Record summary:
Chemical mapping of a 207-nucleotide RNA with DMS and 2A3. The reactions ran in a buffer of 150 mM KOAc, 10 mM MgCl2 and 150 mM bicine (pH 8.5), at 24 C. The DMS profile rests on 3,837 reads. Reactivities are rounded to 0.1 and cut off at 0 and 3.
RNA sequence: GGGAACGACUCGAGUAGAGUCGAAAAUCAGCUUCCAUAGAACGGCUCGCUUCUUCGCUCAGUGACAACGGACGGCGCAUUACCGAGGUCUUGGUAGAUAGCACCGCUCUGGAGAUAUCGUACAUGGCUGACCAGGAGAAACUGGCGGAGCUCCUGGGAAAAGAGUGGUUUUCGAACCACUCUUUUCAAAAGAAACAACAACAACAAC
Reactivity to DMS in 0.01 (KOAc 150mM, MgCl2 10mM, bicine 150mM(pH8.5), 24C), signal-to-noise 2, nucleotides 027 to 156: u020c040a080g010c010u000u000c010c020a130u000a060g020a070a090c060g020g000c030u000c030g010c010u000u000c060u000u000c020g000c040u000c060a190g010u000g030a120c030a080a110c030g000g020a040c020g000g010c020g010c040a150u000u000a040c020c010g000a120g030g040u000c110u020u000g050g000u000a040g010a100u010a120g070c010a070c000c000g010c000u010c040u000g040g020a160g000a110u000a080u010c040g000u010a130c080a120u010g010g010c010u000g000a160c010c010a030g020g010a050g010a040a030a040c000u000g000g020c040g010g000a160g000c000u010c000c000u000g000g010
Reactivity to 2A3 in 0.01 (KOAc 150mM, MgCl2 10mM, bicine 150mM(pH8.5), 24C), signal-to-noise 3, nucleotides 027 to 156: u050c010a010g020c010u100u030c030c020a080u100a100g100a070a030c000g040g000c030u020c040g020c000u060u000c020u090u030c050g010c050u100c060a090g020u060g100a050c050a110a030c040g030g030a000c030g000g020c010g000c020a020u040u070a030c010c010g050a060g200g010u090c080u130u100g040g000u030a040g030a230u070a040g000c010a010c000c020g020c100u000c010u040g080g010a090g030a030u110a030u060c050g020u040a040c030a110u070g070g000c040u010g010a030c000c020a010g030g020a040g010a000a190a040c090u080g070g000c020g030g000a010g000c000u010c000c000u010g000g000